RNA sequence: GGGAACGACUCGAGUAGAGUCGAAAACGCAGAGGGUUCUGUUAACAAAGAACCUAGAUAGCCGCAUCGGUAUUAUAGGAUGUAGUCGGUGAGCCGGAAUGCCUGCAUCGUAAGCCUAUAAGUAAAUUUAAGUGUAAUCACUUCGGUGAUUACACAACGCUAUUCCAUAGUUCGCUAUGGAAUAGCGAAAAGAAACAACAACAACAAC
Reactivity to 2A3 in 0.01 (KOAc 150mM, MgCl2 10mM, bicine 150mM(pH8.5), 24C), signal-to-noise 4, nucleotides 027 to 156: c080g000c060a040g050a100g040g010g020u000u010c010u020g070u150u140a150a020c050a070a140a000g000a010a010c010c000u010a020g040a070u090a010g040c040c040g050c090a110u140c060g050g010u090a040u150u080a020u080a030g020g020a020u030g090u120a040g070u110c020g000g010u010g040a020g020c000c010g050g060a080a040u080g060c000c000u030g020c010a020u030c030g020u040a050a010g010c000c020u060a040u030a130a060g070u100a060a130a120u200u280u060a130a030g000u000g000u000a010a000u000c000a000c000u010u020c150g090g000u000g000a000u000u000a000c000a000c000a010a000
Reactivity to DMS in 0.01 (KOAc 150mM, MgCl2 10mM, bicine 150mM(pH8.5), 24C), signal-to-noise 2, nucleotides 027 to 156: c070g000c040a080g030a230g000g010g010u000u020c010u010g020u000u000a110a230c200a130a190a060g010a050a000c010c000u000a040g010a240u000a090g010c020c050g000c090a130u010c070g050g060u020a050u000u010a050u000a090g020g000a040u010g030u000a180g030u000c040g030g070u000g020a070g020c010c030g020g030a140a170u010g010c050c020u000g000c020a020u000c030g050u010a090a100g000c010c030u010a050u000a010a070g000u000a030a080a180u000u000u000a110a150g010u000g000u000a000a010u000c000a010c010u000u000c300g060g000u010g010a050u010u000a000c020a010c010a010a110